This 177-nucleotide RNA was probed chemically with 2A3 and DMS. It was measured as part of the RMDB library OK2TRN. For 2A3, 1,856 sequencing reads were counted. For DMS, 2,642 sequencing reads were counted. The reactions ran in a buffer of 150 mM KOAc, 10 mM MgCl2 and 150 mM bicine (pH 8.5), at 24 C.
RNA sequence: GGGAACGACUCGAGUAGAGUCGAAAAGGACGAAGAGCAUGGCGAAGGUCAAGAUGUCGUCGAGGGCUUGGAGGAGCAGAGCAGCCUCAGCGGCUCGCAAACCGCCAGCGACGAUGGUGGUGAGAGCAUAGUCUGGAGUGUUCGCACUCCAGACUAUAAAAGAAACAACAACAACAAC
Reactivity to 2A3 in 0.01 (KOAc 150mM, MgCl2 10mM, bicine 150mM(pH8.5), 24C), signal-to-noise 2, nucleotides 027 to 126: g070g020a020c020g080a050a070g030a010g020c040a050u110g000g000c040g060a070a010g060g000u070c050a010a020g050a100u120g000u020c030g000u020c030g030a030g050g030g060c080u140u210g070g020a070g030g010a020g070c060a010g030a000g000c030a010g020c020c000u090c020a020g010c010g040g000c020u030c020g000c000a120a130a000c010c020g010c000c010a020g000c020g040a050c070g020a040u030g010g030u010g040g010u030g040a120g000a000g000c030
Reactivity to DMS in 0.01 (KOAc 150mM, MgCl2 10mM, bicine 150mM(pH8.5), 24C), signal-to-noise 3, nucleotides 027 to 126: g000g000a120c060g000a050a070g020a100g020c090a080u010g000g020c050g010a120a110g000g010u010c070a070a080g020a120u010g000u000c030g010u000c020g000a070g010g000g000c030u010u000g010g010a100g010g000a190g000c050a100g000a070g000c020a050g030c020c110u010c150a100g010c040g010g010c010u000c010g020c070a040a170a090c010c000g030c000c010a020g010c020g000a040c080g000a040u000g000g020u000g020g020u010g000a100g000a090g000c080